[RMDB]
RNA sequence: GGGAACGACUCGAGUAGAGUCGAAAAGGAACGUGAGAGUGCGAGUACGGCACUUUUCAUAAUUUCAUUGCUGUGCACAGCCCUCACAUCGGUAUGCCUCUUGACGUUGUGUACCAGACGCCAGUGCAUUUAUCCGACUGUUCGCAGUCGGAUAAAUAAAAGAAACAACAACAACAAC
Reactivity to DMS in 0.01 (KOAc 150mM, MgCl2 10mM, bicine 150mM(pH8.5), 24C), signal-to-noise 4, nucleotides 027 to 126: g000g010a070a050c160g010u000g010a000g000a000g010u010g010c010g000a180g000u000a040c040g000g000c000a010c180u000u000u040u010c150a100u050a090a180u020u020u010c190a090u020u020g000c020u000g000u000g000c010a080c070a300g000c000c070c030u000c010a000c040a080u000c030g010g010u030a040u010g000c010c020u000c040u020u030g000a100c120g010u010u010g000u010g000u030a050c040c020a090g010a070c080g030c020c030a090g000u000g020c100
Reactivity to 2A3 in 0.01 (KOAc 150mM, MgCl2 10mM, bicine 150mM(pH8.5), 24C), signal-to-noise 5, nucleotides 027 to 126: g100g020a140a020c060g000u000g010a030g000a010g030u220g010c010g020a050g040u050a030c000g020g010c000a000c000u110u030u090u070c080a050u120a220a120u050u120u100c100a060u030u110g010c020u020g000u020g010c000a040c050a100g000c000c000c020u010c000a040c010a050u060c030g000g020u040a010u070g000c010c010u040c050u060u150g080a050c060g020u020u030g000u010g010u040a020c000c000a020g010a020c030g020c020c010a030g020u030g090c040
Chemical mapping of a 177-nucleotide RNA with DMS and 2A3. The RNA was probed in 150 mM KOAc, 10 mM MgCl2 and 150 mM bicine (pH 8.5) at 24 C.